[RMDB]
RNA sequence: GGGAACGACUCGAGUAGAGUCGAAAAGGUGCUGUUCGUUUUCCAAUUGACGUUAGUUCUGCUUUCAUUCAAACCACUAACAGAUUUUUAAUUUCUGUUAACUCAAACCAAGCUCACUGGCAAAUGCGCUAUCCCAAGAAUUCGUUCUUGGGAUAGCAAAAGAAACAACAACAACAAC
Reactivity to DMS in 0.01 (KOAc 150mM, MgCl2 10mM, bicine 150mM(pH8.5), 24C), signal-to-noise 2, nucleotides 027 to 126: g000g060u000g030c060u000g010u020u010c130g010u050u040u000u020c000c110a010a270u000u020g000a020c080g020u000u000a060g050u000u020c000u020g000c040u020u010u000c090a040u030u020c140a200a120a170c170c040a040c170u000a020a000c000a000g000a120u000u000u000u080u130a100a180u040u010u000c000u000g010u000u000a030a090c020u000c170a060a040a090c010c070a090a100g010c010u000c010a040c110u010g000g020c000a060a020a110u010g010c140
Reactivity to 2A3 in 0.01 (KOAc 150mM, MgCl2 10mM, bicine 150mM(pH8.5), 24C), signal-to-noise 4, nucleotides 027 to 126: g070g000u050g020c040u040g040u050u060c030g030u050u030u080u030c050c000a070a050u060u150g060a060c060g000u030u040a020g000u070u040c040u050g030c010u050u060u110c030a070u100u040c030a030a110a080c040c000a050c070u020a010a000c010a000g010a020u060u080u040u070u250a180a300u080u080u000c000u010g010u000u020a080a050c050u040c100a010a030a160c030c020a060a000g000c010u010c050a030c030u020g000g000c020a050a050a040u110g030c050
Record summary:
Source: RMDB library OK1LIB, as collected in RNAgym. Chemical mapping of a 177-nucleotide RNA with DMS and 2A3. Reactivities are given for positions 27 through 126. For DMS the reverse transcriptase was MarathonRT.